RNA sequence: GGGAACGACUCGAGUAGAGUCGAAAAUGCAGGCGGCCGCCGUCAUGGGUCUUUAUCAGGCGGCUUCGGGUGCGGCACUGGCUUCGGCGCCGCGCACCGUCCCGGCGCCGACGGUUAUGAAUCCAGGGUCACUUAGAUCAUUCGUGAUCUAAGUGACAAAAGAAACAACAACAACAAC
Reactivity to 2A3 in 0.01 (KOAc 150mM, MgCl2 10mM, bicine 150mM(pH8.5), 24C), signal-to-noise 1, nucleotides 027 to 126: u120g000c000a000g090g000c020g040g040c000c020g010c050c020g050u020c020a160u080g060g040g060u110c070u110u220u050a170u090c050a030g060g000c130g010g000c020u030u050c020g020g050g060u120g150c030g030g010c020a020c050u050g040g030c000u120u080c040g000g050c010g010c020c020g030c020g000c020a100c080c050g030u050c000c010c030g000g000c010g000c130c040g010a000c030g040g000u080u060a100u200g040a070a070u020c010c050a030g130g070
Reactivity to DMS in 0.01 (KOAc 150mM, MgCl2 10mM, bicine 150mM(pH8.5), 24C), signal-to-noise 2, nucleotides 027 to 126: u020g010c070a060g010g020c100g010g010c040c040g020c020c000g010u000c100a100u000g010g000g010u010c120u000u020u000a060u000c120a100g010g030c040g010g010c070u000u020c020g030g010g010u000g010c030g000g010c030a070c060u000g000g000c070u000u010c010g020g010c020g020c000c000g010c180g000c010a060c140c090g000u000c040c060c010g020g000c030g030c000c010g000a020c150g020g000u000u000a050u010g000a120a080u000c000c000a110g010g020